[RMDB]
RNA sequence: GGGAACGACUCGAGUAGAGUCGAAAAGCACAAGACUUCGAACAUUAUAGCAGUUAGUAGUUGCCUAAACCCAUUGCAAUAUAUCGGACAGUAGAGGUCGCAAGCCUAUACUGUGCGGUGAACAUUCAAAAGGGAUGGUACUUCGGUACCAUCCCAACGCUAUUGAUUUCUUCGGAAAUCAAUAGCGAAAAGAAACAACAACAACAAC
Reactivity to DMS in 0.01 (KOAc 150mM, MgCl2 10mM, bicine 150mM(pH8.5), 24C), signal-to-noise 2, nucleotides 027 to 156: g000c090a080c050a170a090g010a090c050u000u010c000g040a150a130c040a100u000u010a120u010a170g000c020a130g020u010u000a110g010u010a090g000u010u000g010c030c050u020a090a080a190c030c010c020a300u000u000g020c000a060a090u000a050u000a000u000c000g030g000a030c020a020g010u010a030g010a020g030g030u000c060g030c300a070a300g020c010c010u010a020u000a020c010u000g060u000g010c000g020g010u010g010a050a110c090a160u000u000c050a050a030a140a080g030g000g030a000u000g040g000u010a000c000u000u020c300g000g000u000a000c000c000a000u010c000c020c000a000a010
Reactivity to 2A3 in 0.01 (KOAc 150mM, MgCl2 10mM, bicine 150mM(pH8.5), 24C), signal-to-noise 4, nucleotides 027 to 156: g020c020a020c020a050a070g090a050c040u060u050c100g100a130a070c090a180u230u240a190u250a140g060c080a030g020u060u110a010g000u090a010g020u100u090g010c010c020u070a100a080a070c020c020c020a050u050u210g050c030a070a020u050a000u000a020u190c010g000g080a000c000a000g010u010a000g010a030g020g000u150c040g060c130a030a010g020c010c000u010a010u000a030c010u000g000u030g060c000g000g000u010g030a060a040c050a070u090u290c090a080a050a030a100g010g000g000a000u000g000g020u000a000c000u010u050c130g060g010u010a000c000c000a000u000c010c000c000a000a000